[RMDB]
The data come from the RNA Mapping Database (RMDB), library OK2TRN. An RNA of 177 nucleotides, treated with DMS and read out base by base. The reactions ran in a buffer of 150 mM KOAc, 10 mM MgCl2 and 150 mM bicine (pH 8.5), at 24 C. DMS adducts were read by reverse transcription with MarathonRT. The DMS profile rests on 1,061 reads. Reactivities are given for positions 27 through 126.
RNA sequence: GGGAACGACUCGAGUAGAGUCGAAAAAAUCAGAGACAACCAUCACGAAGUAGACAGGGAUAGCAGAUCAUGACCGGACUCAGCCAAACCACCGUGGACCAAGCCAAGCAGACGGCCGUCAACAUGGCCACAUCAUCUGUUUCGACAGAUGAUGUGGAAAAGAAACAACAACAACAAC
Reactivity to DMS in 0.01 (KOAc 150mM, MgCl2 10mM, bicine 150mM(pH8.5), 24C), signal-to-noise 2, nucleotides 027 to 126: a080a040u010c050a090g020a140g020a060c030a060a040c110c050a050u020c040a130c100g020a020a120g020u030a100g000a090c060a070g000g000g000a070u000a040g000c020a040g010a050u010c050a050u000g010a150c080c000g040g020a090c090u000c040a070g030c040c060a030a120a140c140c020a070c080c070g030u000g020g000a110c060c080a140a060g010c080c020a040a070g040c060a050g020a130c100g010g000c010c030g030u000c070a020a040c190a060u000g000g000